[RMDB]
RNA sequence: GGGAACGACUCGAGUAGAGUCGAAAAUCGAUUUCGAUGCCAUUAUACGUGCGCCGAACACGCUUGACGCACAUCGCGUGAUCCAUUGGGCUGCACAGGCAGCACCCGACACGCAGGAUCGCAUGGAAAAUGCGAGGUGCUUCGGCACCUCGCAUUUAAAAGAAACAACAACAACAAC
Reactivity to DMS in 0.01 (KOAc 150mM, MgCl2 10mM, bicine 150mM(pH8.5), 24C), signal-to-noise 1, nucleotides 027 to 126: u020c040g010a180u040u000u000c030g010a000u000g000c000c050a060u000u020a100u000a120c130g000u000g000c020g000c020c020g030a050a080c210a120c230g010c090u000u000g020a040c030g000c000a010c010a040u000c130g020c000g020u000g030a160u000c040c100a120u040u000g000g000g010c070u000g000c000a170c300a120g050g000c000a040g000c030a020c020c040c300g030a030c040a020c020g000c000a110g020g020a090u000c280g000c050a030u000g020g000a000
Chemical mapping of a 177-nucleotide RNA with DMS. For DMS the reverse transcriptase was MarathonRT. The data come from the RNA Mapping Database (RMDB), library OK2TST. The reactions ran in a buffer of 150 mM KOAc, 10 mM MgCl2 and 150 mM bicine (pH 8.5), at 24 C.